Background
Structure probing data (2A3 and DMS) for a 177-nucleotide construct. 2A3 adducts were read by reverse transcription with SuperScript II with manganese. DMS adducts were read by reverse transcription with MarathonRT. The reactions ran in a buffer of 150 mM KOAc, 10 mM MgCl2 and 150 mM bicine (pH 8.5), at 24 C.

RNA sequence: GGGAACGACUCGAGUAGAGUCGAAAACUCUCUCUCCAUAAACAAAUAGUAUUUUUGAUAUGACUGCUUGUUAUUAAAAUGAUUGUUUCAGUUGUCUUUGUUUGGAUAUCAUAUUUGCUGAUGCUCACAUACUACUAGCGUUCGCGCUAGUAGUAUGAAAAGAAACAACAACAACAAC
Reactivity to 2A3 in 0.01 (KOAc 150mM, MgCl2 10mM, bicine 150mM(pH8.5), 24C), signal-to-noise 1, nucleotides 027 to 126: c020u030c000u050c000u000c030u000c040c000a100u100a150a090a000c130a030a000a010u150a010g280u050a160u010u080u000u100u100g110a090u200a100u260g040a070c030u030g000c000u090u040g020u010u040a050u000u220a080a180a160a070u120g090a040u010u040g160u010u010u050c030a000g000u000u020g160u140c030u000u040u000g100u000u150u040g010g000a010u030a060u300c010a020u070a150u170u230u210g050c040u050g070a040u100g050c000u030c000a020
Reactivity to DMS in 0.01 (KOAc 150mM, MgCl2 10mM, bicine 150mM(pH8.5), 24C), signal-to-noise 2, nucleotides 027 to 126: c090u000c010u010c020u000c010u010c030c010a090u020a070a040a070c030a040a030a030u000a060g010u000a020u000u020u000u030u020g010a120u030a070u020g010a050c010u010g000c080u000u000g010u010u000a080u020u020a050a060a070a060u020g000a090u010u000g020u000u000u000c090a120g000u010u000g010u000c050u000u000u000g010u010u000u000g010g000a060u030a020u010c060a020u020a090u000u020u020g000c090u000g010a050u000g010c030u010c050a140